[RMDB]
An RNA of 177 nucleotides, treated with DMS and read out base by base. The reactions ran in a buffer of 150 mM KOAc, 10 mM MgCl2 and 150 mM bicine (pH 8.5), at 24 C.

RNA sequence: GGGAACGACUCGAGUAGAGUCGAAAAUGUCACCGCCAGGAUUAAUCCCCAAAAGAAAUAUUCAGGCCGAGUUUGAGCAAGGGCAUAUCCCUGGAGCUGUUUACUUUGAUAUUGAUGCAAUUGCAGACACACACUCAGGAUUCGUCCUGAGUGUGUGAAAAGAAACAACAACAACAAC
Reactivity to DMS in 0.01 (KOAc 150mM, MgCl2 10mM, bicine 150mM(pH8.5), 24C), signal-to-noise 1, nucleotides 027 to 126: u000g000u000c030a040c040c050g010c030c040a040g010g010a050u000u030a100a190u010c000c000c010c170a090a070a150a100g010a080a140a040u000a080u000u000c040a070g010g000c050c090g010a080g000u000u000u000g010a050g010c010a090a050g000g000g020c080a080u000a100u010c020c000c010u000g020g020a140g020c040u010g010u000u000u000a050c070u000u000u000g000a080u000a190u020u000g020a130u000g000c060a110a050u000u010g030c050a050g000a180
Reactivities are rounded to 0.1 and cut off at 0 and 3. For DMS, 1,040 sequencing reads were counted.